This 207-nucleotide RNA was probed chemically with 2A3.
2A3 adducts were read by reverse transcription with SuperScript II with manganese.
It was measured as part of the RMDB library OK3TST.
The RNA was probed in 150 mM KOAc, 10 mM MgCl2 and 150 mM bicine (pH 8.5) at 24 C.
RNA sequence: GGGAACGACUCGAGUAGAGUCGAAAACACACGGACAUCACAGCACACACAGGCCUCAUGGGCACGCACAGAUAACACACAGAUGUCACAGUACACACAGCCUCACACAGCACACAUGGGUCUCACACAGGCCUGCAUAGACAUCACACGGACAUCACACCUAUGGCAUGUUCGCAUGCCAUAGGUGAAAAGAAACAACAACAACAAC
Reactivity to 2A3 in 0.01 (KOAc 150mM, MgCl2 10mM, bicine 150mM(pH8.5), 24C), signal-to-noise 1, nucleotides 027 to 156: c090a000c000a030c050g100g050a020c030a010u090c050a030c040a060g000c080a060c000a000c000a010c000a060g100g000c000c000u100c100a110u160g000g070g000c020a060c100g030c000a060c000a020g070a050u120a130a120c030a000c020a020c040a030g000a100u070g010u030c020a010c040a070g080u100a030c010a030c000a000c040a020g010c000c000u030c000a020c000a000c000a000g050c050a030c000a000c000a100u050g050g000g010u040c060u080c010a080c000a000c060a050g050g000c010c010u010g000c000a060u000a080g090a050c000a020u060c010a020c010a010c090g010g010a000c000a000u060c000a000